[RMDB]
RNA sequence: GGGAACGACUCGAGUAGAGUCGAAAAGGUGGAAGCUGCUGCGGUCGUACAGGUGUGUGAUGAAUCCACCCAGCAACAGCCCGAUGAUCAGCCCGAUCGACGUCAUGGUCAGGGCCUGGGACAGGCCGGACUAUGCUAAUUUCGAUUAGCAUAGUCCAAAAGAAACAACAACAACAAC
Reactivity to DMS in 0.01 (KOAc 150mM, MgCl2 10mM, bicine 150mM(pH8.5), 24C), signal-to-noise 9, nucleotides 027 to 126: g010g020u010g000g010a090a090g010c040u000g020c040u010g020c060g010g010u010c070g010u020a110c220a120g010g020u010g020u010g000u010g000a100u030g010a120a080u010c060c020a050c030c000c050a110g010c110a060a050c110a080g000c020c020c020g000a130u020g000a060u010c060a140g000c030c020c020g010a060u010c060g000a060c090g000u020c120a090u020g000g000u000c040a130g000g000g000c020c020u010g000g010g010a140c080a040g010g000c070c060
Reactivity to 2A3 in 0.01 (KOAc 150mM, MgCl2 10mM, bicine 150mM(pH8.5), 24C), signal-to-noise 9, nucleotides 027 to 126: g090g010u080g040g040a090a030g020c030u050g010c020u040g030c050g070g030u160c040g030u090a080c050a060g050g020u040g030u030g020u030g090a210u110g060a040a030u020c010c000a010c000c000c000a020g020c030a010a090c000a020g020c000c000c020g050a100u150g030a040u040c030a010g040c010c010c010g040a070u070c050g040a050c040g050u100c040a090u120g050g000u030c050a060g060g000g000c010c010u030g000g010g040a060c050a060g010g000c020c030